[RMDB]
RNA sequence: GGGAACGACUCGAGUAGAGUCGAAAACAGCAAAAAGGAACCGAUUCCCACCAAGUUCGGAAAGAGAUACCGGGCGAGGCGCUGAAGAAAGAAUCUCGCUUCCGACACCCCAAGGACUCGACUGAAGAAUGCACGCCAUCGUUCGCGAUGGCGUGAACACUAGGUGUCUGUUCGCAGACACCUAGUGAAAAGAAACAACAACAACAAC
Reactivity to 2A3 in 0.01 (KOAc 150mM, MgCl2 10mM, bicine 150mM(pH8.5), 24C), signal-to-noise 2, nucleotides 027 to 156: c010a000g110c030a000a060a120a060a040g070g040a070a010c050c000g020a060u040u010c020c000c000a010c020c030a070a000g020u030u010c000g020g030a120a060a020g060a010g000a020u040a120c010c030g000g010g000c020g010a020g020g000c030g000c090u040g030a070a020g090a080a150a010g100a060a110u040c010u020c010g000c000u030u060c020c010g010a010c010a070c030c010c010c010a020a040g000g020a040c020u010c070g040a020c070u110g000a040a010g100a190a040u150g030c030a000c000g010c000c000a000u010c010g070u100u080c150g000c010g110a010u000g000g000c000g010u000g000a000a000